[RMDB]
RNA sequence: GGGAACGACUCGAGUAGAGUCGAAAAGGGGUCACAUUCGGCUCGUUUGACGUGUAAGACAUGAGCUGAAGCCUCCACGGCUCAACAGCUUACACCGAGAGCCAAUGUGACGGAGGCACCCAAAAUCUCCUGCCACGAUUCGUCGUGGCAGGAGAAAGCAUGCUUUUGUCUUCGGACAAAAGCAUGCAAAAGAAACAACAACAACAAC
Reactivity to 2A3 in 0.01 (KOAc 150mM, MgCl2 10mM, bicine 150mM(pH8.5), 24C), signal-to-noise 1, nucleotides 027 to 156: g220g020g000g000u000c000a020c000a010u070u100c220g000g000c030u010c010g000u180u220u270g060a030c000g010u000g000u000a010a010g020a070c140a300u220g030a000g000c010u010g000a040a020g010c000c020u000c000c010a030c000g010g030c010u010c010a030a260c020a120g120c030u010u000a000c000a000c000c000g080a050g010a000g000c000c010a010a000u000g000u000g000a000c000g000g000a000g000g010c010a010c000c000c000a030a050a050a150u050c000u020c020c000u000g020c000c000a000c000g020a010u050u060c210g040u000c020g000u210g000g010c000a000g000g000a000g000a000a000a000